[RMDB]
RNA sequence: GGGAACGACUCGAGUAGAGUCGAAAAGGAAAGCUCAAUAACUGCAAAAUUCAGUCAAUGAAAAGCCUGCUUACCUCCCUCGCAGGCGCAGCUGGGUUGGAGGAUACGGACGCCGUGCUUGAGUGCCAGUGGGAUUAUCGUUCGCGAUAAUCCCACUAAAAGAAACAACAACAACAAC
Reactivity to DMS in 0.01 (KOAc 150mM, MgCl2 10mM, bicine 150mM(pH8.5), 24C), signal-to-noise 1, nucleotides 027 to 126: g030g020a000a100a090g050c050u000c030a050a030u030a140a050c010u020g010c160a030a100a050a060u000u000c020a070g000u010c060a060a000u050g020a020a110a040a240g020c000c020u010g000c020u000u040a220c020c030u000c000c000c070u050c080g000c000a000g010g000c000g060c060a000g000c040u010g020g000g000u010u000g090g000a120g000g000a090u050a050c060g000g030a120c100g040c010c000g020u030g000c020u000u010g020a040g020u050g000c110c030
Reactivity to 2A3 in 0.01 (KOAc 150mM, MgCl2 10mM, bicine 150mM(pH8.5), 24C), signal-to-noise 2, nucleotides 027 to 126: g200g000a100a010a050g030c030u020c060a040a120u230a160a030c010u040g050c060a110a080a060a040u090u100c020a040g150u060c020a040a180u030g060a050a170a000a000g000c000c010u010g000c000u060u130a070c020c050u040c000c020c030u000c000g040c000a020g030g030c000g000c000a030g000c000u020g000g000g040u040u020g090g000a020g010g050a040u010a110c070g010g030a000c020g040c020c000g000u010g000c020u060u050g050a020g010u100g090c060c020